[RMDB]
RNA sequence: GGGAACGACUCGAGUAGAGUCGAAAAGCAAGGCGACCGCUGUCUGUUCCGGCGUGCGCUCGCCGGCGGCGGCAUCGCCGGUGAACUUGGACAGUACCGACGCCAGCGAGUCACCGUCGUCGAUAGGUGACCAGCGAGCAUUCGUGCUCGCUGGUCAAAAAGAAACAACAACAACAAC
Reactivity to DMS in 0.01 (KOAc 150mM, MgCl2 10mM, bicine 150mM(pH8.5), 24C), signal-to-noise 1, nucleotides 027 to 126: g010c060a080a180g010g000c010g000a120c150c130g040c000u010g000u010c040u000g000u000u010c030c010g000g000c000g000u030g020c190g050c060u000c050g010c010c010g030g000c040g040g000c020g010g010c110a120u000c000g000c000c000g000g060u000g030a040a080c080u000u020g000g000a040c090a100g030u010a120c060c030g040a130c160g040c070c040a110g000c090g000a140g020u000c030a010c020c000g010u000c050g010u000c050g020a100u000a060g010g030

An RNA of 177 nucleotides, treated with DMS and read out base by base. High DMS reactivity at an A or C suggests that its Watson-Crick edge is free. For DMS, 848 sequencing reads were counted. The RNA was probed in 150 mM KOAc, 10 mM MgCl2 and 150 mM bicine (pH 8.5) at 24 C.